[RMDB]
This 207-nucleotide RNA was probed chemically with DMS and 2A3.
For 2A3 the reverse transcriptase was SuperScript II with manganese.
Source: RMDB library M2RFPK, as collected in RNAgym.
RNA sequence: GGGAACGACUCGAGUAGAGUCGAAAAGUCUGUGCGUUUCCAUUUGAGUAUCCUGAAAACGGGCUUUUCAUCAUGGAACGUACAUAUUAAAUAGUAGGAGUGCAUAGUGGCCCGUAUAGCAGGCAUUGAGGCGAGGAUUGUUUCGACAAUCCUCGAACUGUACACACUUGUUCGCAAGUGUGUACAGAAAAGAAACAACAACAACAAC
Reactivity to DMS in 0.01 (KOAc 150mM, MgCl2 10mM, bicine 150mM(pH8.5), 24C), signal-to-noise 2, nucleotides 027 to 156: g030u000c070u010g010u000g010c010g030u000u010u000c000c020a070u000u000u050g010a110g040u000a080u000c030c030u000g010a040a070a130a210c050g020g010g000c090u000u010u000u000c050a030u000c110a060u000g020g000a040a020c050g020u000a040c020a060u000a040u000u000a060a110a090u000a070g010u010a050g020g020a110g020u010g000c060a120u000a090g010u000g050g020c030c000c030g000u000a070u000a110g030c030a060g010g040c050a130u010u000g010a110g010g020c030g030a040g020g010a010u010u010g000u000u000u010c220g020a100c010a010a020u010c010c000u000c010g000a000a060
Reactivity to 2A3 in 0.01 (KOAc 150mM, MgCl2 10mM, bicine 150mM(pH8.5), 24C), signal-to-noise 5, nucleotides 027 to 156: g050u010c040u030g000u000g000c010g020u010u180u060c010c010a030u050u050u060g020a020g010u070a120u120c010c030u060g040a070a060a030a050c120g000g010g010c040u130u090u060u090c040a060u000c020a000u010g000g010a000a000c000g000u000a000c000a000u010a010u010u130a070a060a060u100a020g070u030a010g000g050a050g020u060g040c050a050u040a110g070u070g010g010c010c020c010g000u050a050u070a060g020c030a010g040g000c030a020u030u130g070a050g050g130c020g000a010g010g000a000u000u000g010u020u080u080c090g040a000c000a000a000u010c010c000u000c000g000a000a010